An RNA of 207 nucleotides, treated with DMS and 2A3 and read out base by base.
For DMS the reverse transcriptase was MarathonRT.
The data come from the RNA Mapping Database (RMDB), library M2RFPK.
RNA sequence: GGGAACGACUCGAGUAGAGUCGAAAAUUCUCAGCACUCAUCAAGAAGUAGGCUUAGGCCAAUUGCUUGGUGGUGAAAGUAGAGGGAAGGUAGCACUUCGACGCCUCUAAGUACGCUGUGGUAGUAGAAAACUGGACAUCGUUCGCGAUGUCCAGAAGUAUUGAAUGAGGUUCGCCUCAUUCAAUACAAAAGAAACAACAACAACAAC
Reactivity to DMS in 0.01 (KOAc 150mM, MgCl2 10mM, bicine 150mM(pH8.5), 24C), signal-to-noise 2, nucleotides 027 to 156: u000u000c000u000c000a150g020c050a060c030u000c020a050u000c020a020a050g010a050a030g030u000a150g040g020c020u010u000a150g070g050c000c010a060a060u010u010g020c030u000u000g000g060u000g000g000u010g000a050a060a130g030u000a040g000a070g000g020g000a070a070g020g020u010a190g000c140a220c040u000u000c020g010a120c080g000c010c010u000c010u000a050a110g010u000a050c040g020c020u000g030u000g010g020u000a070g000u000a110g000a100a090a050a150c000u000g000g000a040c000a020u000c000g030u010u030c290g010c010g030a020u000g000u000c010c000a000g010a000a070
Reactivity to 2A3 in 0.01 (KOAc 150mM, MgCl2 10mM, bicine 150mM(pH8.5), 24C), signal-to-noise 4, nucleotides 027 to 156: u020u010c000u000c010a030g050c020a020c040u180c020a040u020c010a010a010g030a100a010g050u080a040g010g000c020u110u100a070g150g000c020c020a050a120u040u070g020c010u000u010g000g000u020g020g000u010g040a080a040a000g090u070a010g010a000g020g040g000a040a030g030g020u080a010g060c040a030c110u040u020c040g080a070c060g080c020c000u010c000u030a060a050g090u050a030c100g000c100u060g020u060g130g030u060a070g020u020a020g140a090a090a050a050c010u000g000g000a000c000a010u000c000g030u060u040c140g000c020g080a000u000g000u010c000c000a000g000a000a000